[RMDB]
Annotation:
The data come from the RNA Mapping Database (RMDB), library OK2TRN. An RNA of 177 nucleotides, treated with 2A3 and DMS and read out base by base. For DMS the reverse transcriptase was MarathonRT.

RNA sequence: GGGAACGACUCGAGUAGAGUCGAAAAACAUCGGCUUCGGCCGGCUGCGCUUCGACGACGAUCGGCUCGUGCGCGAGGUGCUCGUCGAAGAGCGGCUGAUCGCGGCGCUGCCGGACGGGCAUCCGCAUCCUAGGGAUAGGUUCGCCUAUCCCUAGGAAAAAGAAACAACAACAACAAC
Reactivity to 2A3 in 0.01 (KOAc 150mM, MgCl2 10mM, bicine 150mM(pH8.5), 24C), signal-to-noise 2, nucleotides 027 to 126: a000c020a070u150c060g060g000c020u190u110c170g060g010c000c000g000g020c000u010g010c020g000c000u050u070c070g030a000c000g020a020c020g040a070u050c000g080g000c050u010c060g100u050g030c130g010c010g050a030g140g130u110g000c040u010c010g010u020c020g030a090a050g000a020g000c020g030g020c050u090g000a060u190c050g010c000g000g020c010g000c020u030g000c010c020g050g010a030c050g020g020g000c020a020u060c000c000g000c040a060
Reactivity to DMS in 0.01 (KOAc 150mM, MgCl2 10mM, bicine 150mM(pH8.5), 24C), signal-to-noise 3, nucleotides 027 to 126: a100c110a070u010c090g020g010c010u000u010c090g020g020c020c010g000g000c020u000g010c020g020c050u010u000c010g010a090c000g000a060c060g020a080u000c040g010g000c000u000c100g020u000g040c140g030c010g010a020g020g000u010g000c140u000c010g000u010c020g000a060a090g000a050g020c030g010g020c040u010g010a080u000c080g010c040g000g000c030g020c010u000g010c010c010g000g010a080c160g000g000g010c040a060u000c010c020g020c110a240